Record summary: Chemical mapping of a 207-nucleotide RNA with 2A3 and DMS. High DMS reactivity at an A or C suggests that its Watson-Crick edge is free. It was measured as part of the RMDB library OK3TST. DMS adducts were read by reverse transcription with MarathonRT. The reactions ran in a buffer of 150 mM KOAc, 10 mM MgCl2 and 150 mM bicine (pH 8.5), at 24 C.

[RMDB]
RNA sequence: GGGAACGACUCGAGUAGAGUCGAAAAGAGACCGCCUGGAUUGCGUGAAAGCCAGUGAUCAGUGCCUGAAGGAGCAGAGCUGCAGCACCAAGUACCGCACGCUAAGGCAGUGCGUGGCGGGCAAGGAGACCAACUUCAGCCUGGCAUCCGGCCUGGAAACUACCUACGAAUUCGUUCGUAGGUAGUUAAAAGAAACAACAACAACAAC
Reactivity to 2A3 in 0.01 (KOAc 150mM, MgCl2 10mM, bicine 150mM(pH8.5), 24C), signal-to-noise 2, nucleotides 027 to 156: g100a010g030a020c040c000g030c020c010u000g010g010a040u030u080g050c030g020u030g010a090a000a000g000c000c000a010g020u020g030a040u060c050a020g000u060g110c010c040u170g080a140a050g010g040a010g090c030a000g020a020g040c010u020g010c040a020g020c050a030c040c020a020a000g060u090a190c010c010g030c010a010c010g010c000u060a040a040g150g020c000a010g030u020g040c010g000u010g090g090c040g000g000g000c020a020a070g000g010a050g020a050c050c070a060a090c050u030u040c010a000g020c000c010u010g010g050c010a060u050c020c010g020g040c060c050u050g020g000a060
Reactivity to DMS in 0.01 (KOAc 150mM, MgCl2 10mM, bicine 150mM(pH8.5), 24C), signal-to-noise 1, nucleotides 027 to 156: g040a150g000a110c050c070g060c010c010u000g010g000a100u000u010g000c040g000u000g000a060a050a060g030c010c010a040g020u020g000a080u000c030a140g050u000g050c050c000u010g000a060a130g020g030a070g010c030a070g000a110g000c060u000g000c090a060g030c010a170c010c030a010a270g000u030a060c010c010g000c030a070c020g010c030u000a060a080g040g040c030a110g020u000g010c000g020u020g020g060c030g020g030g000c030a080a230g030g030a160g010a300c060c030a080a070c030u000u000c060a100g030c000c020u000g010g020c050a080u010c000c030g010g000c050c000u000g000g000a160